Source: RMDB library OK2TST, as collected in RNAgym. Chemical mapping of a 177-nucleotide RNA with 2A3 and DMS. The RNA was probed in 150 mM KOAc, 10 mM MgCl2 and 150 mM bicine (pH 8.5) at 24 C. The 2A3 profile rests on 1,194 reads. Values cover nucleotides 27 to 126.
[RMDB]
RNA sequence: GGGAACGACUCGAGUAGAGUCGAAAAGCUCUCCAUGAGAGCCAUGGGCCACAGCUGCUUCUAAUCGGCCAGCUUGGCCCCAUCUAAAGUAUGAUUUCUUAAUACAUGAGAUGUUUUAAGUACAUGAUCUGAGGACAAAUUUCGAUUUGUCCUCAGAAAAAGAAACAACAACAACAAC
Reactivity to 2A3 in 0.01 (KOAc 150mM, MgCl2 10mM, bicine 150mM(pH8.5), 24C), signal-to-noise 2, nucleotides 027 to 126: g000c000u020c000u000c070c000a120u300g000a000g000a000g000c000c040a110u080g000g000g000c000c000a040c000a040g000c000u010g000c000u080u030c020u140a180a140u150c040g040g060c090c000a010g010c000u040u000g000g000c030c000c030c000a020u030c010u100a120a100a070g050u030a040u090g050a150u120u140u080c020u070u060a030a020u070a060c040a050u200g150a040g020a190u040g060u040u100u030u100a060a040g000u000a040c040a070u050g040a050
Reactivity to DMS in 0.01 (KOAc 150mM, MgCl2 10mM, bicine 150mM(pH8.5), 24C), signal-to-noise 3, nucleotides 027 to 126: g000c000u000c020u010c020c260a220u010g010a040g000a010g000c010c120a110u010g000g000g000c000c000a020c250a020g020c030u000g020c060u000u010c140u000a180a160u010c200g010g000c300c050a020g000c010u010u000g010g020c000c000c000c070a010u000c040u010a080a070a150g000u010a050u000g000a120u000u000u000c040u010u000a060a000u010a020c020a050u000g000a160g010a300u000g000u000u010u010u000a030a080g020u010a060c060a060u000g010a130

As a SHAPE reagent, 2A3 marks flexible, mostly unpaired nucleotides at the ribose 2'-OH. For DMS, 1,730 sequencing reads were counted.